[RMDB]
Source: RMDB library OK3TST, as collected in RNAgym. Structure probing data (2A3 and DMS) for a 207-nucleotide construct. The RNA was probed in 150 mM KOAc, 10 mM MgCl2 and 150 mM bicine (pH 8.5) at 24 C. The 2A3 profile rests on 910 reads. For DMS, 3,331 sequencing reads were counted. DMS adducts were read by reverse transcription with MarathonRT. Values are in units of 0.01, from 0 to 300, in steps of 10.

RNA sequence: GGGAACGACUCGAGUAGAGUCGAAAAGUGGUAGACGUAGCGCGACAUCCAAGUGAUCCCGGUGGCGGUGGUGCUGGCCCGCGUGAACUCCCGGGCGCGGUUCCAGAUGUUGCGCAGCGGUCGGAAGUAUUCCAUGGUCGGCACGGUCUGACCGGUGACGCCCAGUCAUAUUCGUAUGACUGGGCGUAAAAGAAACAACAACAACAAC
Reactivity to 2A3 in 0.01 (KOAc 150mM, MgCl2 10mM, bicine 150mM(pH8.5), 24C), signal-to-noise 2, nucleotides 027 to 156: g150u130g020g050u100a030g000a070c030g010u050a040g000c000g020c000g030a000c000a000u010c020c000a160a070g020u010g070a180u170c030c000c000g040g000u030g010g000c030g000g080u120g000g020u120g020c010u010g060g000c050c020c000g000c010g010u050g070a100a110c090u070c020c000c020g000g040g000c040g000c000g010g100u190u010c010c000a020g000a000u020g030u000u000g000c000g040c040a000g010c000g000g160u030c000g070g010a060a000g110u050a070u180u000c010c040a040u130g000g000u020c000g000g020c030a040c300g020g070u020c020u020g000a020c000c000g000g010u040g010
Reactivity to DMS in 0.01 (KOAc 150mM, MgCl2 10mM, bicine 150mM(pH8.5), 24C), signal-to-noise 2, nucleotides 027 to 156: g030u000g020g020u000a070g000a050c040g000u010a150g010c030g020c000g000a020c020a010u000c030c080a080a150g020u000g000a190u000c000c010c020g010g010u000g010g040c030g030g050u000g000g020u000g020c000u020g000g050c300c010c030g020c020g000u010g020a110a110c090u010c060c000c010g010g010g020c000g020c020g030g000u010u000c050c050a080g010a090u000g000u000u000g020c010g080c010a030g020c020g020g020u000c000g000g020a060a150g010u000a090u000u000c040c000a140u020g020g010u010c040g010g030c050a230c130g020g030u010c010u000g010a030c010c000g000g030u020g010